[RMDB]
RNA sequence: GGGAACGACUCGAGUAGAGUCGAAAAGCAUACAACUUCGGUUGUAUGCAACGACAGAGUUGACUGUCAUAAACAACGUAACAUGUGACUUACAAUAACACAUUGCAGCAGCUUUCGAGCUGCUGAAGGGAUAACCCAUAUUCGUAUGGGUUAUCCCAAAAGAAACAACAACAACAAC
Reactivity to 2A3 in 0.01 (KOAc 150mM, MgCl2 10mM, bicine 150mM(pH8.5), 24C), signal-to-noise 2, nucleotides 027 to 126: g020c000a010u020a020c000a000a000c020u050u090c210g160g010u020u000g000u000a000u010g020c010a000a020c010g040a000c000a000g010a000g050u030u040g070a210c010u000g020u030c030a020u140a020a100a020c010a030a000c060g060u080a010a050c030a070u040g010u000g060a050c020u110u230a020c090a050a300u060a180a010c020a000c010a010u020u210g020c010a000g000c010a010g000c000u050u010u260c300g090a000g000c000u020g000c000u000g000a000a010
Reactivity to DMS in 0.01 (KOAc 150mM, MgCl2 10mM, bicine 150mM(pH8.5), 24C), signal-to-noise 2, nucleotides 027 to 126: g000c020a010u000a000c000a000a010c000u000u020c160g020g000u000u000g000u000a010u000g020c020a040a050c190g000a010c000a000g000a080g010u000u000g010a190c000u000g000u000c130a110u000a040a050a070c030a040a080c080g000u000a060a110c200a040u010g010u010g000a070c140u010u000a060c130a040a050u010a050a160c030a030c050a030u010u010g020c000a000g000c010a000g000c010u000u000u010c220g020a020g000c020u000g010c000u000g000a020a050